An RNA of 207 nucleotides, treated with 2A3 and read out base by base. Source: RMDB library M2RFPK, as collected in RNAgym. The 2A3 profile rests on 609 reads. Reactivities are given for positions 27 through 156.

RNA sequence: GGGAACGACUCGAGUAGAGUCGAAAACGAGGGGUGGGCGAAAGUUGCCAUGAGACCGUAACUUUCGUAGUCAUUGAUAAAGGGGCAGGUCUCGCUCUUCUGUCAUUGCGGUUGCCUAGAGGCAUGGAAAACCAUGACAGGUUCGCCUGUCAUGGAACCUUCUCGAUACGUUCGCGUAUCGAGAAGGAAAAGAAACAACAACAACAAC
Reactivity to 2A3 in 0.01 (KOAc 150mM, MgCl2 10mM, bicine 150mM(pH8.5), 24C), signal-to-noise 1, nucleotides 027 to 156: c040g020a080g040g080g010g160u210g000g000g010c000g000a020a000a000g000u000u000g000c010c050a130u180g040a010g010a040c000c010g000u000a000a040c000u000u000u020c030g020u020a110g060u040c050a060u020u200g030a050u090a170a100a000g000g050g060g020c100a040g020g000u030c030u000c010g040c010u020c000u060u000c000u000g030u000c020a040u060u190g000c110g040g000u100u120g070c000c010u110a110g000a130g010g000c030a030u060g100g100a090a070a000a130c020c000a000u000g000a000c010a000g000g000u000u020c110g060c010c000u000g010u030c000a000u000g000g000a000a000